Structure probing data (2A3 and DMS) for a 177-nucleotide construct. DMS (dimethyl sulfate) methylates the pairing face of unpaired adenines and cytosines.
RNA sequence: GGGAACGACUCGAGUAGAGUCGAAAACCGUAUCGGUUCGCCGAUACGGAAAAGUUAAUGCUGCUAACACACAUCUUAAGCAUGGCGGUCGUAUCGCUGGUGGGACUCCCCAGUUCGCUGGGGAGAACCACUACUGUGUUUUCGAACACAGUAGUGGAAAAGAAACAACAACAACAAC
Reactivity to 2A3 in 0.01 (KOAc 150mM, MgCl2 10mM, bicine 150mM(pH8.5), 24C), signal-to-noise 2, nucleotides 027 to 126: c000c000g000u000a000u000c000g000g050u050u050c160g030c060c000g000a000u000a000c000g000g010a050a080a000a010g060u070u110a100a030u110g030c030u020g020c040u100a130a010c040a000c010a010c010a150u050c050u110u120a050a020g020c020a040u040g030g000c030g020g020u080c060g040u110a050u140c030g010c050u040g020g030u060g020g020g040a060c000u000c000c000c000c000a000g010u040u060c160g010c080u000g000g000g000g000a000g000a000a000
Reactivity to DMS in 0.01 (KOAc 150mM, MgCl2 10mM, bicine 150mM(pH8.5), 24C), signal-to-noise 9, nucleotides 027 to 126: c000c000g010u000a000u000c000g010g010u000u010c220g030c000c000g010a010u000a000c000g010g000a010a020a050a090g010u000u000a060a070u000g010c020u000g010c070u010a060a080c090a090c090a060c090a060u010c070u000u000a080a090g010c040a040u000g010g010c050g010g010u000c120g010u000a070u000c060g020c040u000g010g010u000g000g010g010a220c000u000c000c000c000c000a010g010u000u010c180g020c000u000g000g000g000g010a000g000a020a090

The RNA was probed in 150 mM KOAc, 10 mM MgCl2 and 150 mM bicine (pH 8.5) at 24 C. 2A3 is a SHAPE reagent: it acylates the 2'-hydroxyl of flexible nucleotides of all four kinds. It was measured as part of the RMDB library M2PK50.